[RMDB]
RNA sequence: GGGAACGACUCGAGUAGAGUCGAAAAGUCCUGCCAUGAGACCGCAACGAGAGCAUGUCGCAUCGAAUGGACUCGGGGAGUCAGCAGCUUGCCCCACGGAUGAGCGCCUAAUGCCGGCAUUCGGGAAAAUAGACUGGAUAGUUCGCUAUCCAGUCAACUUGUGGAUUUGGUUCGCCAAAUCCACAAGAAAAGAAACAACAACAACAAC
Reactivity to 2A3 in 0.01 (KOAc 150mM, MgCl2 10mM, bicine 150mM(pH8.5), 24C), signal-to-noise 2, nucleotides 027 to 156: g000u010c010c000u020g060c000c010a080u080g030a030g030a090c020c020g040c100a060a100c170g040a040g000a020g090c050a110u090g030u110c100g000c050a040u060c040g010a050a080u090g050g030a010c000u010c090g050g000g030g000a060g070u080c000a000g020c000a010g010c000u070u070g020c020c000c010c030a000c000g020g040a040u120g000a020g190c060g020c030c060u200a220a090u190g060c050c030g080g040c000a020u080u060c030g010g010g050a000a070a000a120u120a040g020a000c000u000g000g000a000u010a010g010u010u030c070g020c150u000a000u040c000c000a010g000u020c000a000a000